[RMDB]
RNA sequence: GGGAACGACUCGAGUAGAGUCGAAAAAGAUUCCUCCACUUUUGAUCCCUCAUCUUACGUGCCAUGUAUGCAGAUUUUGCUAACGUGGUGAAAUGAGGGAUCAAAAGUGGAGGAAUCUGAAAUUACACGUCAAUUAAGACUUCGGUCUUAAUUGACGAAAAGAAACAACAACAACAAC
Reactivity to DMS in 0.01 (KOAc 150mM, MgCl2 10mM, bicine 150mM(pH8.5), 24C), signal-to-noise 1, nucleotides 027 to 126: a020g010a000u000u000c000c000u010c000c030a000c000u000u010u000u010g010a020u000c000c010c000u000c000a020u000c120u000u000a170c270g060u020g040c010c010a000u000g000u020a180u020g000c000a020g000a250u000u000u000u000g010c020u010a120a050c000g010u000g010g010u000g010a030a070a000u000g000a020g010g040g010a000u000c000a000a010a010a010g010u000g000g010a010g000g010a000a000u000c000u000g000a050a120a050u010u010a110c200a130

Structure probing data (DMS) for a 177-nucleotide construct. DMS (dimethyl sulfate) methylates the pairing face of unpaired adenines and cytosines. Conditions: 150 mM KOAc, 10 mM MgCl2 and 150 mM bicine (pH 8.5), 24 C. For DMS the reverse transcriptase was MarathonRT. For DMS, 1,085 sequencing reads were counted.